[RMDB]
RNA sequence: GGGAACGACUCGAGUAGAGUCGAAAAGUCCUUUUUCGGUUAUCAUGGUACCGAUGCUGUAUAUCUGAAAGGUACAGUACUGUGAUAACUGAAGAAUGGUGAAAACAGCAAUCCUUCGGGAUUGCUGGAAUUCACAUGCGUUCGCGCAUGUGAAUUCAAAAGAAACAACAACAACAAC
Reactivity to 2A3 in 0.01 (KOAc 150mM, MgCl2 10mM, bicine 150mM(pH8.5), 24C), signal-to-noise 2, nucleotides 027 to 126: g030u000c000c000u000u030u020u000u020c000g020g000u000u000a000u010c000a020u010g010g010u000a010c000c050g100a300u070g030c010u070g100u100a140u060a130u300c070u090g220a160a070a020g040g000u020a020c010a010g000u000a000c000u010g010u000g000a000u010a030a000c010u000g000a000a020g050a010a040u160g060g000u080g100a120a080a010a010c020a010g020c010a010a000u000c010c000u000u070c170g090g000g010a010u020u010g000c000u000g000
Reactivity to DMS in 0.01 (KOAc 150mM, MgCl2 10mM, bicine 150mM(pH8.5), 24C), signal-to-noise 1, nucleotides 027 to 126: g010u000c000c010u000u000u000u000u000c000g020g030u000u000a000u010c000a020u010g000g020u000a020c000c050g020a140u000g010c000u020g010u000a130u000a090u030c280u000g000a090a200a160g010g000u000a040c040a070g000u000a000c000u000g010u000g000a010u000a000a000c000u000g000a010a010g000a000a030u010g040g000u000g000a090a110a070a280c000a000g010c010a010a000u000c000c000u000u010c140g050g010g010a010u000u000g000c000u000g020
An RNA of 177 nucleotides, treated with 2A3 and DMS and read out base by base. The DMS profile rests on 1,301 reads. For DMS the reverse transcriptase was MarathonRT. The RNA was probed in 150 mM KOAc, 10 mM MgCl2 and 150 mM bicine (pH 8.5) at 24 C.